[RMDB]
RNA sequence: GGGAACGACUCGAGUAGAGUCGAAAAGAAAGAAAGAAAGGUCUAGUGCUGUGUGGAAGACUAGUGAUUUUGUUGUUCUGAUGUACUACGACAACAAGUCACAGCCGGCCUCAUAGCGCAGACUCAACUCAUCAUAGCGUUUCGACGCUAUGAUGAGAAAAGAAACAACAACAACAAC
Reactivity to 2A3 in 0.01 (KOAc 150mM, MgCl2 10mM, bicine 150mM(pH8.5), 24C), signal-to-noise 6, nucleotides 027 to 126: g100a010a040a000g140a020a070a000g120a030a120a020g040g000u010c010u120a060g000u040g010c000u000g010u000g010u030g020g000a020a010g010a030c020u110a160g010u000g010a010u140u290u130u070g020u010u000g030u090u040c090u090g070a130u060g040u110a220c120u080a070c190g030a000c000a010a000c000a000a000g010u000c000a000c010a000g010c000c000g040g000c000c010u020c000a000u020a000g000c000g000c010a000g000a000c010u010c010a040a040
Reactivity to DMS in 0.01 (KOAc 150mM, MgCl2 10mM, bicine 150mM(pH8.5), 24C), signal-to-noise 2, nucleotides 027 to 126: g000a140a110a150g040a050a090a080g000a070a170a110g020g020u000c010u000a080g060u000g020c000u000g030u000g000u000g000g010a030a000g000a010c000u000a120g020u000g000a000u000u050u070u010g010u000u000g000u000u020c090u000g000a060u000g020u020a130c250u030a110c090g040a020c000a010a010c000a020a010g000u020c020a000c020a040g000c000c010g000g000c010c030u000c020a000u000a000g030c000g000c000a000g000a020c020u040c090a090a140
Structure probing data (2A3 and DMS) for a 177-nucleotide construct. For 2A3 the reverse transcriptase was SuperScript II with manganese. The data come from the RNA Mapping Database (RMDB), libraries RFM100 and RFMREP. Values cover nucleotides 27 to 126. Values are in units of 0.01, from 0 to 300, in steps of 10.